[RMDB]
Chemical mapping of a 177-nucleotide RNA with DMS and 2A3. For 2A3 the reverse transcriptase was SuperScript II with manganese. Conditions: 150 mM KOAc, 10 mM MgCl2 and 150 mM bicine (pH 8.5), 24 C.
RNA sequence: GGGAACGACUCGAGUAGAGUCGAAAAGCUUGUAGCUUCGGCUACAAGCAUCUAAAAUCAGCGGUAAAUAAUUACGAGGCGUUACCGCUGAACGCCUCGAUACAACCACAUCAUUCGUGAUGUGGAACUCUAUAACACCGUUCGCGGUGUUAUAGAGAAAAGAAACAACAACAACAAC
Reactivity to DMS in 0.01 (KOAc 150mM, MgCl2 10mM, bicine 150mM(pH8.5), 24C), signal-to-noise 3, nucleotides 027 to 126: g010c000u000u010g020u000a000g010c000u000u010c300g030g030c000u000a000c010a000a010g010c000a010u000c040u000a030a060a090a120u000c010a010g000c000g020g010u000a040a020a050u000a050a040u000u020a090c050g010a020g000g010c000g010u000u010a110c020c000g000c000u000g000a010a020c000g000c010c000u000c000g010a180u010a040c180a130a160c010c000a010c000a000u000c000a020u010u000c190g000u000g010a010u020g010u000g000g000a010a030
Reactivity to 2A3 in 0.01 (KOAc 150mM, MgCl2 10mM, bicine 150mM(pH8.5), 24C), signal-to-noise 5, nucleotides 027 to 126: g010c000u000u000g000u000a010g000c010u030u030c300g130g000c000u000a000c000a010a000g000c000a000u020c010u060a060a060a030a110u020c000a000g010c010g170g210u220a060a090a080u110a070a090u200u150a130c050g000a000g000g000c000g010u010u020a150c000c000g000c000u000g000a000a000c000g000c000c010u000c010g010a010u060a180c060a090a060c020c000a000c000a000u020c000a010u010u140c170g160u030g010a000u000g000u010g000g000a000a000
The data come from the RNA Mapping Database (RMDB), library M2PK50.